[RMDB]
RNA sequence: GGGAACGACUCGAGUAGAGUCGAAAACCAUCCUUCGCUCAAGCUGUCGUGCGCAGUAGGACGAGUUGGCCAUCAAGGCACUUAUUCCACCAUACAUAUUCACAGAGAGGAUGGGAAAGCAUGCGGAGCAGCUGAUUGGAUGGGAAAGCAUGCGUAGUACAAACAUGUUGUUCGCAACAUGUUUGUAAAAAGAAACAACAACAACAAC
Reactivity to 2A3 in 0.01 (KOAc 150mM, MgCl2 10mM, bicine 150mM(pH8.5), 24C), signal-to-noise 7, nucleotides 027 to 156: c000c000a000u010c010c000u110u100c060g040c070u070c090a090a080g000c000u030g070u150c080g110u090g070c030g000c030a050g030u140a080g040g030a030c070g010a030g020u100u170g180g020c020c020a130u210c190a240a230g020g000c010a010c020u040u050a130u160u020c010c010a010c020c020a020u080a120c030a030u160a210u130u230c080a070c050a080g100a000g010a020g150g030a050u020g020g010g040a010a000a020g020c030a020u110g000c000g020g030a040g010c030a010g000c020u030g020a190u120u100g040g000a030u020g000g010g020a050a060a000g070c070a050u160g030c040g080u060a030g060
Reactivity to DMS in 0.01 (KOAc 150mM, MgCl2 10mM, bicine 150mM(pH8.5), 24C), signal-to-noise 5, nucleotides 027 to 156: c010c010a030u010c020c000u010u000c030g040c050u000c040a080a090g030c010u000g020u000c050g040u010g050c030g030c060a070g030u000a080g030g010a040c030g010a050g010u000u000g040g030c000c020a130u010c170a140a210g030g020c030a070c030u000u000a070u000u000c020c010a080c020c030a130u010a080c040a110u000a100u000u000c070a110c100a140g000a190g020a100g020g000a030u010g000g010g000a060a060a130g010c020a020u000g020c040g000g020a200g030c050a040g010c020u010g000a130u010u000g020g020a080u010g000g020g000a070a050a100g020c030a040u000g020c010g000u000a130g020